[RMDB]
RNA sequence: GGGAACGACUCGAGUAGAGUCGAAAAGUGAACGAUCUCACGAGAGUGAUCGUACGAACUCGAGAACGAGUACGAGUGAGUACUCGAACGUACUCUCACGAGUACGAGUACUCGAUCUCUCUCUCGUACACGUGAGAUCACUCUCACGUACGAACACGCCCAAAAAUCCUUUCGAGGAUUUUUGGGCAAAAGAAACAACAACAACAAC
Reactivity to 2A3 in 0.01 (KOAc 150mM, MgCl2 10mM, bicine 150mM(pH8.5), 24C), signal-to-noise 1, nucleotides 027 to 156: g030u010g020a040a020c000g040a220u110c010u060c120a020c050g050a000g030a000g010u000g040a030u020c000g040u100a000c040g020a060a020c010u030c070g030a020g020a110a040c200g010a000g000u090a080c070g040a020g030u150g070a020g010u000a030c000u000c040g050a090a050c040g000u000a000c000u030c050u050c060a050c170g000a000g010u000a010c020g000a010g000u000a010c000u000c020g030a140u000c070u000c000u000c000u000c000u010c010g000u040a020c000a010c070g020u020g070a060g000a010u020c000a000c060u000c000u000c020a040c030g020u070a020c000g000a050a000c070a000c160